[RMDB]
RNA sequence: GGGAACGACUCGAGUAGAGUCGAAAAGGCACUUGAGUUUGUUUUUGUCUGAUUUGUAGACAAAGACCAGAUAGACAGGUGCAAAGAAUAAGUCCUCUUUCGCAACCCAGAACUCAUUGUUCAGUAUGCGUUGGUUAUCAUUCGUGAUAACCAACGCAAAAGAAACAACAACAACAAC
Reactivity to 2A3 in 0.01 (KOAc 150mM, MgCl2 10mM, bicine 150mM(pH8.5), 24C), signal-to-noise 2, nucleotides 027 to 126: g050g000c000a000c030u040u050g000a010g060u000u040u070g000u000u020u000u000u000g030u000c060u000g200a300u170u150u250g300u230a010g000a000c000a000a000a000g000a000c000c030a000g070a090u110a030g150a040c000a000g010g000u000g040c000a000a020a000g060a000a070u030a140a000g010u000c000c000u020c000u040u080u040c070g040c010a020a090c010c000c050a010g020a040a020c010u030c010a170u130u010g040u030u060c000a000g100u080a090u070

This 177-nucleotide RNA was probed chemically with 2A3. For 2A3, 707 sequencing reads were counted. 2A3 adducts were read by reverse transcription with SuperScript II with manganese. Source: RMDB library RFM100, as collected in RNAgym. Conditions: 150 mM KOAc, 10 mM MgCl2 and 150 mM bicine (pH 8.5), 24 C.